[RMDB]
RNA sequence: GGGAACGACUCGAGUAGAGUCGAAAAGAUAUGGAAUCCGGGAUCAUCGAUCCGUAACAUCACUCGGAAACGAGUGUGGGGGAGAUCUCGGAUUCCUAAGUCAAAGUGGAGUGUUCGCACUCCACAACAAUGAUCGAGUCUUCGGACUCGAUCAUUGAAAAGAAACAACAACAACAAC
Reactivity to DMS in 0.01 (KOAc 150mM, MgCl2 10mM, bicine 150mM(pH8.5), 24C), signal-to-noise 2, nucleotides 027 to 126: g000a020u010a300u000g000g000a010a000u010c000c000g000g000g000a000u000c000a160u030c120g000a100u010c000c000g050u000a070a110c150a100u010c030a020c020u000c020g000g010a120a120a180c020g000a010g020u000g010u000g000g030g000g010g000a060g010a010u000c000u000c000g000g000a000u000u000c000c000u020a000a070g000u000c040a090a090a120g020u000g000g010a020g000u000g020u000u010c240g040c020a020c010u000c000c000a000c010a040a070
Chemical mapping of a 177-nucleotide RNA with DMS.
The DMS profile rests on 1,656 reads.
DMS adducts were read by reverse transcription with MarathonRT.